[RMDB]
RNA sequence: GGGAACGACUCGAGUAGAGUCGAAAAAGAAACAUCGUCUAUUUUGCAGAAAGCGGCCGCUAACCGAUCGAGCGGGGGAGUAUCCGAAGGUCUUGCGAGCCACGAGGCAAUCUCUUCCAUGUGCGUCGGGCUGUAAGGAAAUUUAUGUCGAUCGGACGAUUCUCUAAAUUUUCGAAUUUAGAGAAUCAAAAGAAACAACAACAACAAC
Reactivity to DMS in 0.01 (KOAc 150mM, MgCl2 10mM, bicine 150mM(pH8.5), 24C), signal-to-noise 2, nucleotides 027 to 156: a100g000a140a100a060c020a060u000c020g020u000c050u000a100u000u000u000u000g060c030a090g010a090a080a080g010c060g020g030c000c010g020c010u000a060a080c000c010g010a020u000c020g010a040g030c000g000g040g010g010g020a130g040u000a090u000c010c000g030a100a190g010g010u010c000u010u000g000c030g020a130g020c000c020a090c030g000a090g020g030c030a130a110u000c060u020c040u000u020c050c050a130u010g020u000g000c020g030u000c020g050g060g060c040u020g010u010a050a160g000g000a010a050a110u000u000u000a050u020g000u000c000g010a100u000c010g020g010a220c150
Reactivity to 2A3 in 0.01 (KOAc 150mM, MgCl2 10mM, bicine 150mM(pH8.5), 24C), signal-to-noise 2, nucleotides 027 to 156: a000g040a020a040a000c020a100u040c020g130u030c090u090a160u100u140u130u220g020c030a020g070a130a090a040g060c020g060g000c000c000g000c040u020a130a110c010c000g000a010u020c000g010a000g000c020g010g010g010g020g020a030g020u070a080u070c020c000g070a080a010g040g010u050c030u030u040g010c050g070a020g000c000c020a210c110g000a010g020g010c010a030a080u030c090u060c000u300u160c080c050a110u150g010u000g140c060g170u010c000g000g010g000c000u040g010u010a010a010g010g060a000a090a030u140u210u050a080u110g090u050c020g000a000u000c000g000g000a000c020